Record summary:
Source: RMDB libraries RFM100 and RFMREP, as collected in RNAgym. An RNA of 177 nucleotides, treated with 2A3 and DMS and read out base by base. The reactions ran in a buffer of 150 mM KOAc, 10 mM MgCl2 and 150 mM bicine (pH 8.5), at 24 C. High 2A3 reactivity points to a flexible backbone, as in loops and unpaired stretches. Reactivities are given for positions 27 through 126. For DMS the reverse transcriptase was MarathonRT.
RNA sequence: GGGAACGACUCGAGUAGAGUCGAAAAAGGCUAAUGAGGGUCACUCAAAGGGGCUGAUCAAAUAUUCAAAUUUCCCCUCACGCCGGGAACUUUUAUGCACCAGGAAAGUUGAGGCAACUGAGCUGUGCAAAUCAUAGAUCUUCGGAUCUAUGAUUUGAAAAGAAACAACAACAACAAC
Reactivity to 2A3 in 0.01 (KOAc 150mM, MgCl2 10mM, bicine 150mM(pH8.5), 24C), signal-to-noise 8, nucleotides 027 to 126: a000g050g000c030u070a090a020u100g040a040g020g050g040u060c030a020c060u070c040a080a080a040g080g010g020g000c040u040g000a030u070c050a030a080a080u170a110u150u090c040a040a040a110u060u040u030c010c000c000c000u020c000a030c050g000c010c000g010g000g010a010a000c010u050u020u020u020a110u180g050c030a050c030c010a030g040g080a070a080a030g020u050u060g040a050g040g000c020a060a080c060u070g010a010g040c040u020g030u050g060
Reactivity to DMS in 0.01 (KOAc 150mM, MgCl2 10mM, bicine 150mM(pH8.5), 24C), signal-to-noise 9, nucleotides 027 to 126: a080g000g010c050u000a070a120u020g010a060g000g000g010u010c090a060c030u010c040a060a120a120g010g000g010g010c120u010g000a070u010c080a060a080a090u020a060u020u020c100a050a100a120u010u010u000c030c010c000c030u000c040a060c170g000c040c040g000g010g010a030a030c050u000u010u000u020a070u020g000c060a050c040c030a060g000g000a040a040a050g010u010u000g000a240g000g000c050a040a070c090u010g000a090g010c050u000g000u010g010